This 177-nucleotide RNA was probed chemically with 2A3. Source: RMDB library OK2TRN, as collected in RNAgym. Conditions: 150 mM KOAc, 10 mM MgCl2 and 150 mM bicine (pH 8.5), 24 C.
[RMDB]
RNA sequence: GGGAACGACUCGAGUAGAGUCGAAAAUACGUACUCUAGAUACAUGGUCUAGGUCAUGUACAUGGUACAGAGUCAUGUCAGUCAUGAUGAGGAUCCAUGGUCAGUGUGAUCUGAUCGAUCUGACAUGGUCGUCUCCCGUAUUCGUACGGGAGACGACAAAAGAAACAACAACAACAAC
Reactivity to 2A3 in 0.01 (KOAc 150mM, MgCl2 10mM, bicine 150mM(pH8.5), 24C), signal-to-noise 1, nucleotides 027 to 126: u090a050c090g000u000a000c040u030c030u130a160g040a260u050a040c040a000u010g080g000u040c020u040a180g170g020u040c010a010u060g030u040a000c000a000u100g030g030u000a000c010a060g060a020g040u040c000a010u000g020u000c030a020g000u030c010a120u300g080a100u070g020a100g000g000a030u030c010c000a080u090g120g120u080c060a110g030u000g180u220g020a020u000c010u030g000a000u000c020g000a030u020c000u040g000a020c000a000u000g000